An RNA of 170 nucleotides, treated with DMS and 2A3 and read out base by base.

RNA sequence: GGGAACGACUCGAGUAGAGUCGAAAAGAGUGCUGGCCAUCCUUUUAAUAAGUUUGGCAAAGCUCGUGUCUAUUAUGAGAGCAUGUCUUACCAGGAGCAAGAUGAACUUUUUGCCAUGACAAAGCGUACACCUGAGUGUUCGCACUCAGGAAAAGAAACAACAACAACAAC
Reactivity to DMS in 0.01 (KOAc 150mM, MgCl2 10mM, bicine 150mM(pH8.5), 24C), signal-to-noise 9, nucleotides 027 to 129: g030a070g000u000g020c100u020g040g000c000c010a030u010c020c010u000u010u020u030a080a120u100a040a070g000u000u010u010g000g020c000a040a090a110g000c020u000c070g000u020g000u010c090u030a050u050u050a080u020g000a080g000a040g040c020a040u000g020u020c020u000u030a110c070c060a100g010g010a090g010c040a030a040g000a040u000g000a080a080c060u000u010u010u000u000g000c020c030a100u030g000a060c090a030a050a040g020c080g010u000a090c140a120
Reactivity to 2A3 in 0.01 (KOAc 150mM, MgCl2 10mM, bicine 150mM(pH8.5), 24C), signal-to-noise 9, nucleotides 027 to 129: g030a000g010u080g010c040u040g050g000c000c000a010u030c010c000u060u060u050u090a190a160u300a110a020g030u020u010u000g000g000c000a040a150a020g010c000u010c020g050u100g040u000c060u050a140u180u070a110u250g080a030g000a000g050c030a030u020g030u020c020u020u050a060c030c030a050g050g040a070g030c010a030a020g020a050u080g030a040a130c030u040u050u010u050u060g030c010c010a060u110g000a050c040a040a070a010g040c030g060u050a030c040a020